[RMDB]
RNA sequence: GGGAACGACUCGAGUAGAGUCGAAAACUUAGGUUCGCCUAAGAUUUGUCCUAAGUCGGAUUGAGUGUGCGGGAGACUUGUGGUCGGAAACGACCACAACGGUCGAAGAACGCACACAAUGAUGUCCGAUAUGGAAGGUUGCAGGAUUCGUCCUGAAACAUCUUGUUCUGUUCGCAGAACAAGAUGUAAAAGAAACAACAACAACAAC
Reactivity to 2A3 in 0.01 (KOAc 150mM, MgCl2 10mM, bicine 150mM(pH8.5), 24C), signal-to-noise 2, nucleotides 027 to 156: c000u000u000a010g070g090u080u060c260g120c050c010u010a020a020g020a110u100u070u300g090u010c010c010u050a180a000g040u030c000g020g010a010u010u080g040a030g020u000g000u000g010c020g000g000g010a000g000a000c000u040u020g000u000g010g000u000c000g040g000a040a020a160c010g000a000c010c010a000c010a020a010c060g000g030u000c010g020a040a000g010a030a020c000g000c010a000c000a000c000a000a020u090g030a040u130g050u000c020c000g000a000u010a050u120g060g010a010a090g120g040u110u130g040c030a020g000g000a010u000u120c120g070u080c100c000u010g000a130a070
Reactivity to DMS in 0.01 (KOAc 150mM, MgCl2 10mM, bicine 150mM(pH8.5), 24C), signal-to-noise 2, nucleotides 027 to 156: c010u000u010a020g000g020u000u020c300g000c010c020u000a010a010g000a270u010u000u000g010u000c000c010u020a120a230g020u000c010g000g000a010u000u000g000a040g040u000g040u000g000c000g000g010g020a120g000a070c000u000u020g030u000g020g050u010c010g040g010a150a120a300c030g030a020c010c000a000c010a000a030c090g020g000u000c010g020a160a170g000a100a250c010g010c000a010c010a010c000a050a060u010g000a040u000g000u000c010c000g000a020u000a230u020g000g000a100a150g000g000u000u000g020c020a040g000g000a160u020u000c220g020u000c010c000u000g000a170a190